[RMDB]
RNA sequence: GGGAACGACUCGAGUAGAGUCGAAAAGAUAUGGACACCUCUACUUUUGACGGAUUCUUAUCGGAAACGAUAACUAUCCGAUAAGUAGGGUGUCCUAAGUCAAAAGCCUCUGGUUCGCCAGAGGCAAUCGAGUACAUUGGUUCGCCAAUGUACUCGAAAAAGAAACAACAACAACAAC
Reactivity to 2A3 in 0.01 (KOAc 150mM, MgCl2 10mM, bicine 150mM(pH8.5), 24C), signal-to-noise 2, nucleotides 027 to 126: g000a010u010a010u090g020g010a010c000a000c010c040u220c010u250a020c000u050u250u300u300g300a300c050g000g000a000u020u000c000u000u000a000u010c000g000g000a000a000a000c000g010a000u010a010a000c000u000a010u040c020c030g110a170u080a210a010g010u000a000g000g000g010u000g000u000c000c000u000a010a010g000u000c000a000a000a080a190g020c020c000u000c000u020g060g200u080u130c300g120c130c010a000g010a000g000g000c000a000a000
Reactivity to DMS in 0.01 (KOAc 150mM, MgCl2 10mM, bicine 150mM(pH8.5), 24C), signal-to-noise 1, nucleotides 027 to 126: g020a010u000a060u030g000g000a010c000a020c000c000u030c010u000a000c000u010u010u000u000g000a300c130g010g000a000u000u000c120u000u020a000u010c000g030g020a030a010a010c010g040a000u000a000a000c070u010a000u000c000c010g020a080u000a020a000g020u010a020g000g000g020u010g010u000c000c000u000a000a030g010u030c010a110a130a180a180g000c010c010u000c010u000g000g000u000u010c290g000c020c000a010g000a010g000g020c010a000a030

This 177-nucleotide RNA was probed chemically with 2A3 and DMS. 2A3 is a SHAPE reagent: it acylates the 2'-hydroxyl of flexible nucleotides of all four kinds. The RNA was probed in 150 mM KOAc, 10 mM MgCl2 and 150 mM bicine (pH 8.5) at 24 C. For 2A3 the reverse transcriptase was SuperScript II with manganese. The 2A3 profile rests on 2,300 reads. For DMS the reverse transcriptase was MarathonRT. The data come from the RNA Mapping Database (RMDB), library TTRDES.